[RMDB]
RNA sequence: GGGAACGACUCGAGUAGAGUCGAAAAGCUCAGUGUGUGUCGCCCCGUCGUCUAGUGCUGGUUCUAGGGCUGGGGCGUCAGCAUCCUGGUCUGACGGGACGGGCAGUAUCUCGCCAUCAACGAUAAACUUCUUCUUUUACUUCGGUAAAAGAAGAAGAAAAGAAACAACAACAACAAC
Reactivity to 2A3 in 0.01 (KOAc 150mM, MgCl2 10mM, bicine 150mM(pH8.5), 24C), signal-to-noise 3, nucleotides 027 to 126: g030c020u020c080a030g010u020g000u020g010u000g030u080c000g000c020c010c020c000g010u040c010g010u030c010u020a020g010u010g130c110u140g180g050u130u030c000u020a010g000g050g000c040u130g060g010g000g000c000g010u000c000a010g010c010a030u040c000c020u020g030g030u040c050u070g020a060c000g020g000g020a030c020g040g040g000c020a010g020u030a060u090c050u020c030g010c030c020a120u110c060a050a060c060g060a060u140a160a090a060
Reactivity to DMS in 0.01 (KOAc 150mM, MgCl2 10mM, bicine 150mM(pH8.5), 24C), signal-to-noise 4, nucleotides 027 to 126: g000c030u000c010a070g000u000g020u000g010u010g010u010c000g010c010c000c000c000g010u000c020g010u020c010u000a020g030u000g010c100u000g000g010u000u000c010u000a030g010g000g020c030u010g050g000g000g000c020g010u010c010a060g000c020a040u000c140c020u000g000g000u000c030u010g010a080c060g010g010g010a050c060g000g010g020c070a080g000u000a090u000c040u000c040g010c030c040a090u010c100a050a080c070g010a130u010a060a080a140
The record gives the reactivity of an RNA of 177 nucleotides to 2A3 and DMS. Reactivities are given for positions 27 through 126. The data come from the RNA Mapping Database (RMDB), library M2PK90. For 2A3, 4,913 sequencing reads were counted. For 2A3 the reverse transcriptase was SuperScript II with manganese. Conditions: 150 mM KOAc, 10 mM MgCl2 and 150 mM bicine (pH 8.5), 24 C.